Source: RMDB library OK3TST, as collected in RNAgym.
The record gives the reactivity of an RNA of 207 nucleotides to 2A3.
The RNA was probed in 150 mM KOAc, 10 mM MgCl2 and 150 mM bicine (pH 8.5) at 24 C.

[RMDB]
RNA sequence: GGGAACGACUCGAGUAGAGUCGAAAAGAGGUUGCAGUGAGCCGAGAUCGCACCACUGCACUCCAGCCUGUUGACAUAGCGACACUCCAUCUCAACAAAAACAAAAAACAAACAAACUUCUAAAAGAUUGUAAGCUGUAACAAAUUCUGGCAAAUGACCACUAUUACGUCUUCGGACGUAAUAGUGGAAAAGAAACAACAACAACAAC
Reactivity to 2A3 in 0.01 (KOAc 150mM, MgCl2 10mM, bicine 150mM(pH8.5), 24C), signal-to-noise 2, nucleotides 027 to 156: g070a010g050g030u150u100g010c000a010g000u010g020a010g030c000c050g070a060g020a160u080c030g000c000a030c080c000a000c000u000g040c000a000c020u020c010c000a030g010c030c000u020g020u000u050g020a050c040a080u140a050g040c020g080a040c010a020c050u020c000c020a060u050c030u020c010a020a080c040a060a080a100a000a020c120a050a130a030a060a030a000c070a080a050a010c010a020a070a130c020u020u000c050u160a080a090a060a100g020a110u050u050g010u080a000a140g000c050u020g050u170a040a030c060a040a060a040u090u040c020u070g030g020c120a040a060a090u150g050a030

Values cover nucleotides 27 to 156. The 2A3 profile rests on 892 reads. For 2A3 the reverse transcriptase was SuperScript II with manganese.